[RMDB]
RNA sequence: GGGAACGACUCGAGUAGAGUCGAAAAACGGAUAGAUUCGUCUAUCCGUGCAUCUCAUAACAGACAGACAAAGUCUGCUAAGAUCUCACUUAGAUAAAGAGAAGAGAGUCGAGUUCGCUCGACUCAACUUAAAUACGCAAUUCGUUGCGUAUUUAAGAAAAGAAACAACAACAACAAC
Reactivity to DMS in 0.01 (KOAc 150mM, MgCl2 10mM, bicine 150mM(pH8.5), 24C), signal-to-noise 9, nucleotides 027 to 126: a020c000g000g000a010u000a000g010a040u000u010c190g020u000c000u000a000u000c000c000g010u000g000c160a140u000c000u000c010a100u010a070a110c030a010g000a030c000a080g010a160c300a110a150a100g000u000c000u010g000c050u000a020a010g000a050u000c020u000c060a110c040u000u000a040g010a120u010a040a060a060g000a040g010a060a140g010a140g000a020g010u000c000g010a010g010u000u010c200g010c000u000c000g000a010c000u000c000a020a060
Reactivity to 2A3 in 0.01 (KOAc 150mM, MgCl2 10mM, bicine 150mM(pH8.5), 24C), signal-to-noise 8, nucleotides 027 to 126: a000c000g000g000a010u010a010g020a010u030u050c190g030u000c120u000a000u000c000c000g000u000g000c000a080u000c000u000c010a040u090a130a040c010a010g040a010c000a010g140a070c090a110a210a020g010u000c000u000g000c010u020a030a010g020a100u030c040u010c040a060c030u020u040a030g030a150u170a240a130a010g080a010g010a100a040g110a010g000a000g020u000c000g000a000g000u050u080c190g030c060u000c000g000a000c000u000c000a000a000
The record gives the reactivity of an RNA of 177 nucleotides to DMS and 2A3. Values cover nucleotides 27 to 126. For DMS the reverse transcriptase was MarathonRT. The data come from the RNA Mapping Database (RMDB), library M2PK50.